[RMDB]
RNA sequence: GGGAACGACUCGAGUAGAGUCGAAAAACAUUAAAUAUCGCACCAAUUGAUGCAAAAAUGAUGUCUCAACCUGCUGAUACUGAAGAAGGACGUAUAGAACAGUACAAACGUACGAUGUUCUGGUCAGUAUGAGCUUCACAUUCGUGUGAAGCUCAUAAAAAGAAACAACAACAACAAC
Reactivity to DMS in 0.01 (KOAc 150mM, MgCl2 10mM, bicine 150mM(pH8.5), 24C), signal-to-noise 2, nucleotides 027 to 126: a140c080a040u020u000a020a060a090u010a130u000c110g010c040a030c030c050a230a130u020u000g000a040u010g010c030a040a080a080a150a090u000g000a000u000g010u000c030u000c090a020a090c050c010u000g000c040u000g000a080u000a080c040u000g000a060a030g010a120a110g030g000a060c130g020u020a070u000a030g000a060a070c020a140g000u000a010c040a070a070a090c270g000u000a020c000g000a090u000g010u020u000c000u000g010g020u000c020a000g010
Reactivity to 2A3 in 0.01 (KOAc 150mM, MgCl2 10mM, bicine 150mM(pH8.5), 24C), signal-to-noise 2, nucleotides 027 to 126: a020c000a030u040u120a030a100a060u230a040u120c060g030c020a020c020c010a140a180u120u210g040a080u030g020c050a000a040a020a060a140u050g030a040u020g030u000c010u010c030a060a110c000c020u090g050c040u030g050a030u040a130c030u100g050a100a100g050a060a020g110g070a050c090g010u050a090u080a120g040a010a030c020a020g020u040a000c020a030a300a010c190g030u040a000c000g040a130u130g000u000u000c010u020g020g020u050c010a000g000
An RNA of 177 nucleotides, treated with DMS and 2A3 and read out base by base. Values cover nucleotides 27 to 126. Source: RMDB library OK2TRN, as collected in RNAgym. DMS (dimethyl sulfate) methylates the pairing face of unpaired adenines and cytosines. For DMS the reverse transcriptase was MarathonRT.